[RMDB]
RNA sequence: GGGAACGACUCGAGUAGAGUCGAAAACUUUUUCAAGCGCCUUUGACUCCGACUCCAGUGCGACAAUGGUAACUUCAUCAUCCUUCGAAAGGCCAUUUGGAUCGACAGAAUGAGUCAAAGGAGUGCAACUGAUAGUGAGCUUCGGCUCACUAUCAGUAAAAGAAACAACAACAACAAC
Reactivity to DMS in 0.01 (KOAc 150mM, MgCl2 10mM, bicine 150mM(pH8.5), 24C), signal-to-noise 1, nucleotides 027 to 126: c070u000u010u000u000u010c120a080a280g000c010g010c000c010u000u000u000g000a020c000u000c040c150g000a140c090u000c040c040a100g010u020g020c040g020a050c100a020a000u000g000g000u010a150a300c060u000u020c070a120u010c120a120u020c140c150u000u000c140g010a040a090a030g000g000c000c000a020u000u010u010g000g030a140u000c000g010a040c060a120g010a130a050u000g010a040g000u000c000a010a030a050g010g000a000g010u000g020c030a030
Reactivity to 2A3 in 0.01 (KOAc 150mM, MgCl2 10mM, bicine 150mM(pH8.5), 24C), signal-to-noise 1, nucleotides 027 to 126: c020u040u090u130u050u100c040a180a020g000c030g060c010c010u040u000u000g010a000c000u020c040c030g040a070c060u040c080c020a110g080u120g250c030g050a020c000a000a000u000g020g000u070a170a150c030u080u020c020a030u000c000a090u060c070c060u130u170c040g040a040a050a000g070g000c070c000a010u100u070u110g050g020a100u000c000g010a030c020a100g010a040a100u110g030a000g030u000c000a020a010a000g000g030a010g030u050g000c030a020
Notes
Conditions: 150 mM KOAc, 10 mM MgCl2 and 150 mM bicine (pH 8.5), 24 C. Structure probing data (DMS and 2A3) for a 177-nucleotide construct. 2A3 adducts were read by reverse transcription with SuperScript II with manganese. As a SHAPE reagent, 2A3 marks flexible, mostly unpaired nucleotides at the ribose 2'-OH. For DMS the reverse transcriptase was MarathonRT. The DMS profile rests on 763 reads.